[RMDB]
RNA sequence: GGGAACGACUCGAGUAGAGUCGAAAAUCACUGGAAGCGAGUCUUGCAUGGGUCUUAGCGAUGAGGCUUGUGAAGCGUAGACAGCGGGUACAAAAGCCGCGUAAUUGAGCCACGAAAUAGGUAAACAGACAUUACAACGGUUCGCCGUUGUAAUGUCAAAAGAAACAACAACAACAAC
Reactivity to DMS in 0.01 (KOAc 150mM, MgCl2 10mM, bicine 150mM(pH8.5), 24C), signal-to-noise 1, nucleotides 027 to 126: u020c070a120c070u000g020g040a200a070g010c000g000a100g000u000c040u000u000g000c020a040u010g010g010g000u000c010u000u000a010g040c300g030a110u000g000a010g020g000c020u020u000g040u000g010a040a110g040c030g020u010a030g010a120c040a150g000c030g000g020g010u000a070c100a100a000a160a150g020c060c000g010c080g000u010a010a060u010u030g000a030g000c040c000a050c130g030a040a060a090u000a020g010g060u000a050a020a020c110a110